RNA sequence: GGGAACGACUCGAGUAGAGUCGAAAAAAACGCCGCCUACAAAGUGCUAUCUCAGAUUAUCUUCCGUCGUCUAUCAACUGUAGGAAAUGAGUUUAUGAGAAGUUAUCAAGCAGGUUCCAAUGACGGACAUGGAGCUAAUGUUCGCAUUAGCUCCAUGAAAAGAAACAACAACAACAAC
Reactivity to DMS in 0.01 (KOAc 150mM, MgCl2 10mM, bicine 150mM(pH8.5), 24C), signal-to-noise 2, nucleotides 027 to 126: a020a040a100c110g010c020c060g010c000c000u000a060c030a080a090a130g020u000g000c020u000a070u010c040u000c050a040g000a090u000u010a050u000c060u000u000c000c010g010u000c160g010u000c120u000a090u010c140a060a100c110u000g020u000a120g020g000a040a020a070u000g000a090g000u000u000u000a060u000g000a080g010a050a060g010u000u000a070u010c050a070a170g020c040a060g010g010u000u020c000c050a110a050u020g000a080c030g020g000a130
Reactivity to 2A3 in 0.01 (KOAc 150mM, MgCl2 10mM, bicine 150mM(pH8.5), 24C), signal-to-noise 2, nucleotides 027 to 126: a000a000a000c060g040c000c010g000c000c020u000a010c020a050a180a030g050u040g010c020u080a220u220c010u010c030a040g000a170u060u050a050u100c030u050u000c000c000g140u200c010g020u050c300u070a180u130c020a050a080c040u070g030u120a040g010g120a000a060a090u100g020a000g050u040u120u160a100u080g060a030g050a040a030g030u080u040a110u180c030a040a030g030c010a000g090g050u010u030c030c040a020a060u160g070a040c030g000g000a000